[RMDB]
RNA sequence: GGGAACGACUCGAGUAGAGUCGAAAAAAAAGAUAUGGAGCGAGCAAGUUUGAUCAGGCGUUGAAACGAGUUCGGAAACGAACUCGUGGAGCCUGGUUUGAAUGAUGACCUCGCUCCUAAGUCAAAACAUUGUGUACCAGUUCGCUGGUACACAAUGAAAAGAAACAACAACAACAAC
Reactivity to 2A3 in 0.01 (KOAc 150mM, MgCl2 10mM, bicine 150mM(pH8.5), 24C), signal-to-noise 1, nucleotides 027 to 126: a000a050a000a040g000a000u030a000u080g010g000a000g000c000g010a000g040c050a190a060g220u150u220u150g020a000u000c000a000g040g000c060g300u300u090g030a000a030a000c000g000a000g010u000u000c000g020g000a000a020a030c020g000a000a000c020u000c020g000u000g000g020a030g000c000c020u000g020g020u000u000u080g080a120a110u300g070a140u060g030a030c010c030u000c000g000c000u020c000c000u000a010a000g000u000c010a000a050a080a140
Reactivity to DMS in 0.01 (KOAc 150mM, MgCl2 10mM, bicine 150mM(pH8.5), 24C), signal-to-noise 2, nucleotides 027 to 126: a060a050a070a070g010a040u000a210u000g010g000a010g020c000g010a030g020c060a060a210g010u000u010u000g000a000u010c000a010g010g030c010g010u010u010g010a190a110a010c000g000a030g000u000u010c010g000g000a060a020a100c000g000a000a000c000u010c000g010u000g000g000a130g010c000c010u000g000g000u000u000u000g030a030a080u010g010a080u010g010a300c300c010u000c010g010c010u010c000c000u000a010a060g000u000c000a080a070a090a150
This 177-nucleotide RNA was probed chemically with 2A3 and DMS. The DMS profile rests on 2,088 reads. 2A3 adducts were read by reverse transcription with SuperScript II with manganese. For DMS the reverse transcriptase was MarathonRT. The data come from the RNA Mapping Database (RMDB), library TTRDES. The RNA was probed in 150 mM KOAc, 10 mM MgCl2 and 150 mM bicine (pH 8.5) at 24 C.